[RMDB]
RNA sequence: GGGAACGACUCGAGUAGAGUCGAAAAACCGACCAGCUAUCACCUUUCCGUCGUGGUGGAUGAUGCGUUGCAGGGCAUCACCCAUAUCGUGCGCGGGCGCGAUCUUUUUCAUGCAACAUCGGUGCAACCAUGGUAAUGGCUUCGGCCAUUACCAUGGAAAAGAAACAACAACAACAAC
Reactivity to DMS in 0.01 (KOAc 150mM, MgCl2 10mM, bicine 150mM(pH8.5), 24C), signal-to-noise 1, nucleotides 027 to 126: a090c020c020g030a110c100c030a070g020c030u010a110u010c010a020c030c050u010u010u010c030c010g000u000c080g010u000g010g000u010g010g000a010u000g020a030u000g000c020g020u000u000g020c090a060g030g000g020c050a010u000c030a010c010c000c010a070u000a040u000c040g020u000g010c020g020c160g000g000g000c040g050c030g000a030u000c040u010u010u010u000u000c080a080u000g000c040a040a040c090a080u010c080g020g000u000g010c090a090a250
Reactivity to 2A3 in 0.01 (KOAc 150mM, MgCl2 10mM, bicine 150mM(pH8.5), 24C), signal-to-noise 2, nucleotides 027 to 126: a010c000c010g000a020c010c010a010g040c020u030a030u090c030a030c040c000u030u090u080c030c020g090u090c050g020u060g040g030u020g040g030a040u030g010a000u040g000c070g050u070u110g020c070a080g000g140g000c030a020u010c020a010c000c000c010a020u030a040u120c040g020u030g020c080g000c100g040g150g000c020g020c010g010a020u030c030u010u140u010u040u060c060a070u110g040c000a020a030c000a060u110c030g030g010u050g010c010a030a040